[RMDB]
RNA sequence: GGGAACGACUCGAGUAGAGUCGAAAAGAUGACAGGGCAAAGAAGAAUUAAGCUGAUUUUAGGCCAAAUAACAAAUGUGACAGCUGUGCUUUUUUGUGUAUGUAUUGGUGUGUGAUAGUGUAUAAUUUCUAGAAAAGCAGUUCUCAUGCAUUUGGGAGAGCGUAUAGCUGUUCGCAGCUAUACGCUCAAAAGAAACAACAACAACAAC
Reactivity to 2A3 in 0.01 (KOAc 150mM, MgCl2 10mM, bicine 150mM(pH8.5), 24C), signal-to-noise 1, nucleotides 027 to 156: g050a000u140g000a050c030a000g170g040g020c020a090a000a090g060a030a120g010a160a070u080u160a130a000g030c000u000g180a260u250u100u110u080a010g000g000c010c000a000a190a040u160a080a060c050a080a130a000u150g050u010g010a020c000a000g010c000u000g000u010g090c000u060u020u070u100u140u180g060u030g080u080a180u030g060u000a110u030u180g010g020u000g000u020g000u000g120a090u060a020g090u070g020u000a000u000a020a060u000u230u070c080u030a000g100a020a050a000a000g000c030a020g050u080u020c000u000c030a000u030g050c010a100u030u160u030g050g000g070a050